Overview
An RNA of 207 nucleotides, treated with 2A3 and read out base by base.
[RMDB]
RNA sequence: GGGAACGACUCGAGUAGAGUCGAAAAGCCUCCGCUCUUAGGACGGGGAUCAAGAGAGGUCAAACCUAAAAGAGCUCGUGUGGAAACCUUGCCUGGGGUGGAAGCAUUAAAACUAAUCAGGAUAGUUUGUCAGUAGCGUGUCCAUCCGCAGCUGGCCCCCCUUAAUAACCUUCGGGUUAUUAAGGGGAAAAGAAACAACAACAACAAC
Reactivity to 2A3 in 0.01 (KOAc 150mM, MgCl2 10mM, bicine 150mM(pH8.5), 24C), signal-to-noise 1, nucleotides 027 to 156: g040c000c010u040c000c000g010c000u080c030u130u300a010g010g020a100c030g000g000g060g000a020u060c060a100a000g130a010g000a020g090g050u100c050a120a120a300c070c020u250a120a120a050a010g060a060g030c000u000c000g200u300g120u050g300g000a170a120a070c010c010u050u150g000c000c000u010g000g000g000g000u000g000g000a000a000g000c000a000u150u180a040a030a000a090c080u140a040a110u050c080a030g250g000a150u060a090g080u050u040u080g000u000c030a000g010u080a060g010c000g030u040g050u070c060c040a040u040c050c000g010c040a040g030c000u010g000g000c020c020
For 2A3, 471 sequencing reads were counted.